[RMDB]
An RNA of 177 nucleotides, treated with 2A3 and DMS and read out base by base. Conditions: 150 mM KOAc, 10 mM MgCl2 and 150 mM bicine (pH 8.5), 24 C. For 2A3, 1,123 sequencing reads were counted. For DMS the reverse transcriptase was MarathonRT. Reactivities are given for positions 27 through 126.

RNA sequence: GGGAACGACUCGAGUAGAGUCGAAAAUUUCCCUUUAUCGCUUUAAAUCUGUAGUCCAGACCCCUACGCCGCAAGGCUCACUUAUUUUUUUAAAGGUAAUUCACUAUGUCCGGUAAAAUGACUGGUAUAAUCCCUCAUAUUUCGAUAUGAGGGAUUAAAAAGAAACAACAACAACAAC
Reactivity to 2A3 in 0.01 (KOAc 150mM, MgCl2 10mM, bicine 150mM(pH8.5), 24C), signal-to-noise 2, nucleotides 027 to 126: u010u000u070c000c000c000u010u110u040a050u070c020g010c000u000u020u170a040a050a100u030c050u070g090u080a030g030u030c030c020a010g050a090c000c020c020c000u030a020c010g040c000c020g000c030a000a000g020g000c010u020c020a070c020u070u070a110u170u080u020u060u000u010u140a060a080a030g050g000u060a080a090u120u150c010a020c130u080a020u110g090u020c000c020g000g000u060a020a050a050a130u180g030a070c050u010g000g050u020a030
Reactivity to DMS in 0.01 (KOAc 150mM, MgCl2 10mM, bicine 150mM(pH8.5), 24C), signal-to-noise 5, nucleotides 027 to 126: u020u000u000c000c000c000u010u020u010a050u000c070g010c040u010u000u000a050a090a100u010c040u010g010u010a070g000u010c080c040a050g000a160c050c000c010c040u000a120c110g020c020c030g000c160a100a140g010g010c020u010c070a030c090u010u000a000u000u010u030u010u020u010u030a040a060a070g000g010u000a050a080u020u000c070a050c050u000a060u010g000u000c020c080g010g000u000a030a070a060a060u020g010a040c030u010g000g020u010a170